[RMDB]
RNA sequence: GGGAACGACUCGAGUAGAGUCGAAAAGAUAUGGAUUGAGGGAGCUUAAACCCUCGGAAACGAGGGUGAGCGACGAUCUCACGGUCCUAAGUCAAAACUGAACUCCUCGUUCGCGAGGAGUUCAGAAGAUUGUCAGGUAGUUCGCUACCUGACAAUCAAAAGAAACAACAACAACAAC
Reactivity to DMS in 0.01 (KOAc 150mM, MgCl2 10mM, bicine 150mM(pH8.5), 24C), signal-to-noise 3, nucleotides 027 to 126: g020a020u000a170u010g000g000a030u000u000g000a050g000g000g010a030g010c010u010u010a050a140a040c010c000c000u010c010g000g000a040a030a100c000g000a020g000g000g020u000g000a020g010c090g000a060c230g000a030u000c000u000c010a110c300g000g000u000c000c000u010a050a120g000u000c020a080a090a110a180c000u000g000a010a020c000u000c000c000u000c010g030u000u020c200g010c020g020a010g000g000a010g000u000u000c000a010g000a080a080
Reactivity to 2A3 in 0.01 (KOAc 150mM, MgCl2 10mM, bicine 150mM(pH8.5), 24C), signal-to-noise 2, nucleotides 027 to 126: g020a000u040a020u120g010g000a020u000u060g010a040g000g020g000a010g000c030u080u070a220a180a090c000c000c000u010c030g000g000a030a020a020c000g000a020g060g000g000u010g030a020g020c040g120a190c030g000a030u030c000u000c010a040c120g090g020u030c000c010u050a070a000g050u080c050a030a020a130a110c020u000g000a000a000c000u000c000c010u020c010g070u080u120c300g020c040g120a020g000g000a000g000u010u000c010a020g000a000a010
Structure probing data (DMS and 2A3) for a 177-nucleotide construct.
It was measured as part of the RMDB library TTRDEL.
Reactivities are given for positions 27 through 126.
2A3 is a SHAPE reagent: it acylates the 2'-hydroxyl of flexible nucleotides of all four kinds.
2A3 adducts were read by reverse transcription with SuperScript II with manganese.
The 2A3 profile rests on 2,519 reads.